[RMDB]
RNA sequence: GGGAACGACUCGAGUAGAGUCGAAAAGCGUACUACAUUCCUUUUGACGCUUAUCUGCAGUGCCAGGACUCCCAAAUAGGAGUCCGGUAAUUCUGCUGAUAAGCGAUAAGGAAUGUAUCGCAAAACAUUGUACUUUCUUUCGAGAAAGUACAAUGAACUGAACUGACAUGUUCGCAUGUCAGUUCAGAAAAGAAACAACAACAACAAC
Reactivity to 2A3 in 0.01 (KOAc 150mM, MgCl2 10mM, bicine 150mM(pH8.5), 24C), signal-to-noise 2, nucleotides 027 to 156: g000c010g040u070a100c020u000a000c030a000u010u030c000c030u050u050u070u200g300a100c020g000c000u000u010a030u000c000u070g010c000a010g000u010g040c090c140a300g050g000a000c000u000c030c040c000a130a260a040u280a060g000g000a000g000u010c010c000g000g000u010a030a010u280u010c000u000g000c000u000g040a000u000a000a000g010c000g040a000u030a010a040g000g010a000a000u040g000u050a050u170c000g000c000a010a060a000a000c010a000u000u000g000u010a000c000u000u000u030c020u110u040u140c280g060a030g030a070a010a010g000u010a010c010a000a000u000g000a020a020

The data come from the RNA Mapping Database (RMDB), library RNAMAK.
Chemical mapping of a 207-nucleotide RNA with 2A3.
The 2A3 profile rests on 1,069 reads.
2A3 adducts were read by reverse transcription with SuperScript II with manganese.
The reactions ran in a buffer of 150 mM KOAc, 10 mM MgCl2 and 150 mM bicine (pH 8.5), at 24 C.